The record gives the reactivity of an RNA of 177 nucleotides to DMS and 2A3. 2A3 adducts were read by reverse transcription with SuperScript II with manganese. Reactivities are given for positions 27 through 126.
[RMDB]
RNA sequence: GGGAACGACUCGAGUAGAGUCGAAAAGUGGCACAAUAAGGAUUCAUCCGCAUCUAUUGAACACCGACUGAUGACCCCUCCUGGUAGUGGGUAAAGUCAGCGCACAACGUCCGCCUCCCAGCAGGGCUCACACGAGACGGUUCGCCGUCUCGUGUGAAAAAGAAACAACAACAACAAC
Reactivity to DMS in 0.01 (KOAc 150mM, MgCl2 10mM, bicine 150mM(pH8.5), 24C), signal-to-noise 1, nucleotides 027 to 126: g090u050g000g020c070a060c050a080a050u030a060a050g000g000a110u000u010c100a060u000c140c040g030c070a050u040c000u010a040u000u100g000a120a120c040a030c100c110g000a110c060u000g000a050u010g040a060c110c000c000c000u000c010c060u040g000g070u010a050g000u020g000g000g010u030a010a070a050g000u020c000a060g000c020g020c110a040c090a030a080c120g000u010c020c020g000c040c020u030c040c010c010a070g000c020a030g020g000g000c120
Reactivity to 2A3 in 0.01 (KOAc 150mM, MgCl2 10mM, bicine 150mM(pH8.5), 24C), signal-to-noise 2, nucleotides 027 to 126: g070u040g000g020c040a020c020a090a130u050a040a110g070g000a040u060u090c060a090u060c100c010g040c040a150u000c050u100a060u040u130g080a110a030c040a060c160c000g140a160c030u030g000a080u120g110a190c000c010c000c040u070c000c210u070g160g020u020a020g040u120g060g010g050u030a000a040a040g020u000c010a010g020c030g000c010a030c020a020a140c040g030u000c000c000g000c000c000u030c000c000c000a000g000c020a010g010g080g010c040

For DMS the reverse transcriptase was MarathonRT.
The DMS profile rests on 1,336 reads.
Source: RMDB library OK1LIB, as collected in RNAgym.